[RMDB]
RNA sequence: GGGAACGACUCGAGUAGAGUCGAAAAACACUGAAGUUCCAACCAGAAUCAAGAAUACUGCUACACAGGAUCAUAACAUCAUUUUAGUCGGGUGUGGAGGCCAAUUUUCCGUGUCUGGUGGUGUUAAGUUUUAGUACGACUUCGGUCGUACUAAAACAAAAGAAACAACAACAACAAC
Reactivity to DMS in 0.01 (KOAc 150mM, MgCl2 10mM, bicine 150mM(pH8.5), 24C), signal-to-noise 2, nucleotides 027 to 126: a080c010a050c060u020g000a110a120g020u000u010c010c030a230a120c040c020a030g000a030a070u020c070a140a080g000a070a040u010a080c040u000g010c020u000a040c130a070c050a050g000g010a040u000c090a060u000a030a070c180a080u020c170a060u020u000u000u000a180g010u000c040g000g010g010u000g000u000g000g010a050g000g000c110c050a050a070u010u000u010u000c030c060g040u010g000u000c050u000g020g010u000g010g030u010g010u000u000a070a100
Reactivity to 2A3 in 0.01 (KOAc 150mM, MgCl2 10mM, bicine 150mM(pH8.5), 24C), signal-to-noise 1, nucleotides 027 to 126: a030c030a030c010u070g080a090a020g030u030u020c020c050a060a020c000c010a020g050a020a070u190c070a150a000g020a050a020u120a130c030u040g090c010u060a020c040a010c000a070g160g000a040u060c010a050u110a130a050c020a110u150c030a050u060u130u080u110a110g050u120c100g070g000g020u020g000u070g030g010a040g080g000c000c020a000a000u090u000u040u000c030c010g060u040g020u010c010u020g000g010u020g030g000u070g000u030u160a100a050

Annotation: The record gives the reactivity of an RNA of 177 nucleotides to DMS and 2A3. The RNA was probed in 150 mM KOAc, 10 mM MgCl2 and 150 mM bicine (pH 8.5) at 24 C.